Structure probing data (2A3) for a 177-nucleotide construct. The reactions ran in a buffer of 150 mM KOAc, 10 mM MgCl2 and 150 mM bicine (pH 8.5), at 24 C.
RNA sequence: GGGAACGACUCGAGUAGAGUCGAAAAAGCACUCGUAGUACGCUACGAGUGCAACCAACGGCCCUCUUUAGGGCCACGAAUCACAUGAAUCCAAAUUGAUAGAGUCGGCCUUACGAGGCCGACUCAAGCUUUUUAGGAGUUUCGACUCCUAAAAAGCAAAAGAAACAACAACAACAAC
Reactivity to 2A3 in 0.01 (KOAc 150mM, MgCl2 10mM, bicine 150mM(pH8.5), 24C), signal-to-noise 3, nucleotides 027 to 126: a010g000c000a000c000u000c010g000u020a010g000u060a010c170g050c100u000a000c000g010a000g000u000g000c000a000a000c010c000a040a090c060g010g000c000c000c010u050c090u080u170u300a030g000g000g060c030c010a010c000g000a010a100u150c020a050c050a210u220g110a140a040u070c090c050a100a050a150u190u150g110a110u170a170g000a010g000u000c000g000g020c000c000u060u060a120c300g060a000g000g010c000c000g020a000c000u000c000a000a000